[RMDB]
RNA sequence: GGGAACGACUCGAGUAGAGUCGAAAACUCAGAUAUAUGAGCUACCUGAUGUAUUAGAUCCAUCAUUGAUUUAUUCAGACAAAUCCCACUCAUUAGACAGAAAUGAAGUUAUAGAUUGGGUUCGUCACGGAUAUAUUACCUUCGGGUAAUAUAUCCGAAAAGAAACAACAACAACAAC
Reactivity to 2A3 in 0.01 (KOAc 150mM, MgCl2 10mM, bicine 150mM(pH8.5), 24C), signal-to-noise 2, nucleotides 027 to 126: c000u010c010a020g040a040u290a000u030a070u270g020a000g000c040u030a060c000c000u020g000a020u020g030u060a160u090u140a050g070a070u030c030c000a000u010c020a040u050u120g010a090u080u070u110a070u140u130c030a020g020a030c030a010a040a060u100c050c000c000a010c000u030c000a050u020u090a090g080a120c030a010g140a050a140a090u120g020a120a050g010u050u090a140u100a160g050a090u030u060g010g030g000u020u020c030g000u020c010a000
Reactivity to DMS in 0.01 (KOAc 150mM, MgCl2 10mM, bicine 150mM(pH8.5), 24C), signal-to-noise 3, nucleotides 027 to 126: c010u000c010a040g040a230u020a110u010a100u000g010a040g020c080u000a120c010c000u000g010a040u020g000u020a100u010u000a080g020a050u010c030c040a010u000c010a170u000u000g010a070u000u000u000a040u030u000c130a110g020a080c020a050a090a040u010c000c000c010a050c060u020c030a060u000u010a070g020a100c070a080g000a080a080a140u010g010a070a100g000u000u000a070u010a120g000a050u000u000g000g000g010u010u000c300g010u000c020a200